[RMDB]
RNA sequence: GGGAACGACUCGAGUAGAGUCGAAAAUACCGCAGGCCUGCGGUGCGGCAGUGUGGAGACCUGCCGUAAGCCGUGCUGUUUUGACAACCGGGAGAAAGCGUAUGCGGAGGCAGCGCUUUCAGGGUCUAAAAGUAUGGGAUCUUCGGAUCCCAUACAAGGUUAACAGAUUGUUCGCAAUCUGUUAACCAAAAGAAACAACAACAACAAC
Reactivity to 2A3 in 0.01 (KOAc 150mM, MgCl2 10mM, bicine 150mM(pH8.5), 24C), signal-to-noise 2, nucleotides 027 to 156: u070a010c000c000g000c020a020g000g010c000c010u040g000c010g020g000u020g000c000g010g000c000a020g020u030g000u120g300g090a060g050a090c010c000u000g000c000c000g010u000a030a000g010c000c000g070u060g030c040u040g040u070u120u150u230g080a040c030a050a030c040c000g000g030g000a050g000a000a010a000g010c000g000u040a300u150g010c040g030g110a050g280g040c000a000g000c000g000c010u010u000u010c000a000g000g000g020u000c020u030a080a080a040a030g010u000a000u000g000g000g010a000u000c010u050u020c120g070g000a000u000c000c010c000a000u000a000c000a000a000
Source information
An RNA of 207 nucleotides, treated with 2A3 and read out base by base. 2A3 adducts were read by reverse transcription with SuperScript II with manganese. Values cover nucleotides 27 to 156.